The data come from the RNA Mapping Database (RMDB), library OK2TST. Structure probing data (DMS) for a 177-nucleotide construct. Values cover nucleotides 27 to 126. For DMS the reverse transcriptase was MarathonRT. The RNA was probed in 150 mM KOAc, 10 mM MgCl2 and 150 mM bicine (pH 8.5) at 24 C.

[RMDB]
RNA sequence: GGGAACGACUCGAGUAGAGUCGAAAAAAAUAAACGGGACUGAAAAAUCAUUCUGGCCUCAAGAUGCUUUGUUGGGGUGUCUAGGUGCUCCAGGUGCUUCUGGGAGAGGUGACCUAGUGAGGGAUCACAUAUUGCUUGCUUUCGAGCAAGCAAUAUGAAAAGAAACAACAACAACAAC
Reactivity to DMS in 0.01 (KOAc 150mM, MgCl2 10mM, bicine 150mM(pH8.5), 24C), signal-to-noise 1, nucleotides 027 to 126: a110a070a120u010a000a020a060c070g010g010g010a060c130u000g000a050a060a090a100a120u000c070a050u020u010c030u000g030g000c060c040u000c070a060a010g000a010u010g010c080u000u000u000g010u000u000g000g000g000g010u000g010u010c020u000a090g000g020u000g010c010u010c040c010a040g010g020u000g030c080u010u000c010u000g030g000g010a130g010a120g010g030u000g010a060c030c020u010a060g020u010g000a080g030g000g000a110u010c110a200